[RMDB]
RNA sequence: GGGAACGACUCGAGUAGAGUCGAAAAUGGGGUGAAUCGGCCUCACCGCCCUCGACGCGAGGACGGUCCGCCGUAGGGCAAACCUUCCGCGCCACACCGCCCGAACCCGACAGCUAACCCGGUAGGCAAAUCAGUUAGCUUUCGAGCUAACUGAUUUAAAAGAAACAACAACAACAAC
Reactivity to DMS in 0.01 (KOAc 150mM, MgCl2 10mM, bicine 150mM(pH8.5), 24C), signal-to-noise 6, nucleotides 027 to 126: u020g000g010g000g020u000g010a080a110u020c020g000g000c020c080u010c160a060c010c000g020c020c000c010u000c000g010a150c220g030c100g010a020g010g010a020c020g000g000u020c250c300g000c020c010g000u020a070g000g000g000c050a080a080a070c060c030u000u010c040c050g000c030g000c020c050a080c060a100c100c080g000c000c020c020g010a070a060c010c030c010g000a090c060a090g010c070u010a090a100c010c000c010g000g020u030a090g000g000c100
Reactivity to 2A3 in 0.01 (KOAc 150mM, MgCl2 10mM, bicine 150mM(pH8.5), 24C), signal-to-noise 6, nucleotides 027 to 126: u120g030g000g000g000u030g060a060a050u080c010g010g000c000c020u040c050a010c010c000g000c000c010c000u010c020g300a300c150g040c130g080a010g000g000a010c010g000g010u020c020c020g030c000c010g030u060a060g000g010g020c040a070a050a090c010c000u090u040c040c020g030c000g000c020c000a050c010a020c000c040g010c000c000c000g000a010a010c000c000c000g020a040c020a030g010c030u060a040a050c000c000c010g060g040u110a070g020g060c050